Chemical mapping of a 207-nucleotide RNA with 2A3 and DMS.

RNA sequence: GGGAACGACUCGAGUAGAGUCGAAAACUGUUUGCUUGGGUAUCACCAGUCGAGGCUCAGUUGGAAAUGCAGAAAUCACCCGUCUUCUGUGUCAGUCACACUGGGAGAUGCAGACUGGAGCUGUUCCUAUUCAGCCAUCUUGGAACGGCUCUCAAAAACGUAAUGAUCAGUUCGCUGAUCAUUACGUAAAAGAAACAACAACAACAAC
Reactivity to 2A3 in 0.01 (KOAc 150mM, MgCl2 10mM, bicine 150mM(pH8.5), 24C), signal-to-noise 5, nucleotides 027 to 156: c040u040g030u100u070u100g090c060u020u040g080g010g040u130a090u130c050a030c050c010a000g020u030c050g030a090g020g000c000u000c020a050g020u040u070g070g070a080a080a040u130g000c010a000g070a060a070a020u140c060a120c020c020c030g060u030c040u010u000c010u000g040u020g040u090c060a040g040u070c020a010c000a010c150u030g020g020g010a150g020a060u110g020c020a030g020a080c050u060g010g000a010g000c000u000g010u000u000c000c000u060a110u100u170c040a050g100c070c010a130u070c110u100u080g000g000a010a000c010g000g000c010u000c000u000c010a070a090a040a000
Reactivity to DMS in 0.01 (KOAc 150mM, MgCl2 10mM, bicine 150mM(pH8.5), 24C), signal-to-noise 2, nucleotides 027 to 156: c060u000g000u010u000u010g020c030u020u040g010g040g000u010a040u000c060a080c050c020a090g000u000c050g020a150g070g010c010u000c010a100g010u000u010g010g000a080a110a090u000g020c040a070g020a080a070a140u010c080a170c030c050c050g000u000c060u000u000c010u000g000u010g020u000c030a220g020u010c100a140c060a030c010u000g050g010g000a080g050a050u000g010c040a090g010a140c050u020g000g010a040g050c000u000g040u000u010c000c010u000a200u000u000c100a170g050c090c060a080u000c070u010u000g040g000a080a030c020g030g000c010u000c030u000c030a030a050a090a130
Overview:
The DMS profile rests on 3,657 reads. Values cover nucleotides 27 to 156. Conditions: 150 mM KOAc, 10 mM MgCl2 and 150 mM bicine (pH 8.5), 24 C. It was measured as part of the RMDB library OK3TST. In probing experiments dimethyl sulfate is read out at A N1 and C N3, which are open when not base-paired. For 2A3, 3,942 sequencing reads were counted. For 2A3 the reverse transcriptase was SuperScript II with manganese.